[RMDB]
RNA sequence: GGGAACGACUCGAGUAGAGUCGAAAAAAAGUGAACAGAGAAUGAGAAUUGGCCAGUAAUUCUUUGGUAUCAAAAACUGUCUAUUAGCAAACAGUUGACAACAUGAUUGGACUAAUAGCCGCUCACAUAAAUGAGAUUCAUUCGUGAAUCUCAUUUAAAAAGAAACAACAACAACAAC
Reactivity to DMS in 0.01 (KOAc 150mM, MgCl2 10mM, bicine 150mM(pH8.5), 24C), signal-to-noise 7, nucleotides 027 to 126: a060a050a080g020u010g010a050a080c030a040g000a090g000a060a040u000g000a190g010a110a080u010u010g010g010c070c040a100g020u010a080a030u000u000c010u000u000u000g020g010u000a080u000c090a050a060a060a060a070c060u000g000u000c020u000a050u000u000a030g000c100a090a050a150c040a010g010u010u000g010a090c170a040a060c120a060u000g010a070u000u010g000g010a120c040u000a030a040u000a030g010c040c080g010c080u000c030a060c130a110
Reactivity to 2A3 in 0.01 (KOAc 150mM, MgCl2 10mM, bicine 150mM(pH8.5), 24C), signal-to-noise 2, nucleotides 027 to 126: a000a000a000g070u030g000a030a010c000a010g050a000g060a090a040u050g010a000g060a080a150u110u040g080g020c020c030a020g030u040a030a040u070u020c000u080u040u060g040g010u090a070u110c030a010a100a090a000a000c020u020g000u030c010u040a080u040u030a050g020c050a150a060a030c000a050g020u030u040g170a090c070a120a000c000a090u100g020a140u070u070g020g020a040c000u000a010a040u000a030g010c020c030g020c020u020c010a060c000a060